Source: RMDB library OK2TRN, as collected in RNAgym.
Structure probing data (2A3 and DMS) for a 177-nucleotide construct.
The 2A3 profile rests on 1,283 reads.
The RNA was probed in 150 mM KOAc, 10 mM MgCl2 and 150 mM bicine (pH 8.5) at 24 C.
Values cover nucleotides 27 to 126.
The DMS profile rests on 4,875 reads.

RNA sequence: GGGAACGACUCGAGUAGAGUCGAAAAAGAGUUACAAUUAGCUGGUCUUGCUGGAGAUCAUCCGGAGUCGUCCUAUUCUAAGAACGAGGAGAUAGAGUCUUUAGAGCAGUUUCAUAUGGCAACGGCAAUUUACCCCAUGAUUCGUCAUGGGGUAAAUAAAAGAAACAACAACAACAAC
Reactivity to 2A3 in 0.01 (KOAc 150mM, MgCl2 10mM, bicine 150mM(pH8.5), 24C), signal-to-noise 2, nucleotides 027 to 126: a000g100a010g020u080u070a110c080a080a150u110u060a060g040c030u010g070g000u000c030u080u040g010c050u100g070g000a020g000a050u010c000a020u030c050c050g020g030a020g040u020c030g030u030c010c020u090a140u100u070c120u100a100a050g040a160a040c030g020a080g070g040a070g010a070u060a060g130a050g040u010c030u030u110u040a030g000a000g020c020a000g030u000u090u090c040a050u070a030u260g050g010c030a020a050c060g050g000c020a020
Reactivity to DMS in 0.01 (KOAc 150mM, MgCl2 10mM, bicine 150mM(pH8.5), 24C), signal-to-noise 4, nucleotides 027 to 126: a070g000a120g010u000u000a080c150a100a110u010u000a050g020c030u000g000g000u000c030u000u000g020c080u000g010g010a070g010a050u000c060a060u010c050c040g000g000a070g010u000c010g020u000c010c010u000a070u000u000c100u010a080a080g010a080a060c070g020a100g010g010a060g000a090u000a050g010a130g010u000c030u000u000u000a090g000a060g010c050a040g000u000u010u000c060a070u010a080u010g010g000c060a040a050c080g010g010c090a080